[RMDB]
RNA sequence: GGGAACGACUCGAGUAGAGUCGAAAAGCGUAUAUGAGCUACAUGUACGAAGAGCAUACUUAGUCAAAGUAUGCAGAAGCCUUCUGUAGCUCAGAGGGCAGGACUAAUCUUUGACUAAGAUUAGGGAUAAUAGCCUAUAUUUCGAUAUAGGCUAUUAAAAAGAAACAACAACAACAAC
Reactivity to DMS in 0.01 (KOAc 150mM, MgCl2 10mM, bicine 150mM(pH8.5), 24C), signal-to-noise 9, nucleotides 027 to 126: g010c030g020u000a040u000a050u000g000a140g020c130u000a100c010a030u000g010u000a030c080g010a080a070g010a240g010c040a060u000a040c000u000u000a070g010u010c130a040a040a020g010u000a050u000g010c050a060g000a160a150g010c060c010u000u000c020u000g000u000a130g010c170u000c010a010g000a050g010g000g010c030a070g010g000a120c040u000a050a040u000c000u000u000u000g010a070c120u000a040a010g010a080u000u000a030g000g000g010a280
Reactivity to 2A3 in 0.01 (KOAc 150mM, MgCl2 10mM, bicine 150mM(pH8.5), 24C), signal-to-noise 7, nucleotides 027 to 126: g040c020g020u050a040u000a010u070g030a050g070c050u110a060c050a020u060g030u040a020c030g040a110a060g040a030g110c030a030u050a120c020u020u020a010g030u070c020a030a030a000g010u030a040u060g020c010a000g060a090a010g020c010c000u010u000c010u010g050u060a020g030c040u010c040a000g000a000g000g010g000c020a020g050g110a030c020u040a030a030u020c010u010u030u060g060a060c040u050a010a000g010a020u030u090a030g040g000g030a020